An RNA of 207 nucleotides, treated with 2A3 and read out base by base.
Reactivities are rounded to 0.1 and cut off at 0 and 3.
For 2A3 the reverse transcriptase was SuperScript II with manganese.
RNA sequence: GGGAACGACUCGAGUAGAGUCGAAAAUGACCGUAGCGCUUCGCCAGCACGCCACACGCAAGGUUGAUACUGAGAUUCCCAUGUGCAGCCAUUGUGAAGAGUAUCCGGUCCAUGUGACCGGCAUGGGAUCGCGGUUCAAGUAUUGCCACCGAUGCACCAGGAUACGGUUGUUCGCAACCGUAUCCUGAAAAGAAACAACAACAACAAC
Reactivity to 2A3 in 0.01 (KOAc 150mM, MgCl2 10mM, bicine 150mM(pH8.5), 24C), signal-to-noise 1, nucleotides 027 to 156: u090g050a050c020c010g010u010a020g000c000g000c100u060u030c010g000c060c020a050g090c000a000c100g070c060c050a080c000a000c070g020c050a070a000g150g010u070u030g060a010u050a230c000u030g000a010g000a120u240u240c040c000c000a000u010g000u020g000c090a090g030c040c100a160u250u130g080u060g100a250a100g040a020g090u070a070u000c000c000g020g000u000c020c000a170u270g060u130g030a000c000c000g030g000c000a050u000g000g000g000a000u000c060g030c040g010g000u000u120c000a040a020g000u030a090u100u060g010c000c070a080c020c070g030a070u160g050c000a000c000